Chemical mapping of a 177-nucleotide RNA with DMS and 2A3. Conditions: 150 mM KOAc, 10 mM MgCl2 and 150 mM bicine (pH 8.5), 24 C. DMS adducts were read by reverse transcription with MarathonRT. 2A3 adducts were read by reverse transcription with SuperScript II with manganese.
RNA sequence: GGGAACGACUCGAGUAGAGUCGAAAAAUCCGGCGAUGUUGAAGUUGGAUGAGGGCGAAGGGUGGUACCGCUGGAGUGUUGCGAGGUGAGUACACUGUAUAACACAGUUAACAAAGCGGACUCACUACACACCAGGGAGAUUCGUCUCCCUGGUGUGAAAAGAAACAACAACAACAAC
Reactivity to DMS in 0.01 (KOAc 150mM, MgCl2 10mM, bicine 150mM(pH8.5), 24C), signal-to-noise 2, nucleotides 027 to 126: a070u010c000c020g010g060c070g010a100u020g020u050u030g050a040a220g000u000u020g030g070a060u000g000a090g000g000g000c050g010a090a100g030g030g010u000g000g030u000a020c000c000g000c000u000g020g020a100g000u010g010u010u000g020c160g000a090g010g000u000g000a120g020u000a040c030a020c030u000g020u000a110u000a040a010c230a000c020a150g040u020u010a130a040c070a070a130a070g020c100g010g010a090c000u020c010a020c050u000a240
Reactivity to 2A3 in 0.01 (KOAc 150mM, MgCl2 10mM, bicine 150mM(pH8.5), 24C), signal-to-noise 1, nucleotides 027 to 126: a080u000c000c000g020g020c000g120a100u030g000u080u050g160a140a100g030u060u030g010g000a050u020g040a250g010g070g000c000g020a020a000g100g000g000u060g000g000u010a040c000c000g000c000u000g020g000a030g090u160g040u030u020g000c000g050a010g000g000u080g000a030g000u050a030c000a000c040u020g070u010a170u140a250a050c030a000c000a070g130u100u100a170a060c080a150a150a000g000c020g030g000a000c030u000c080a000c120u080a000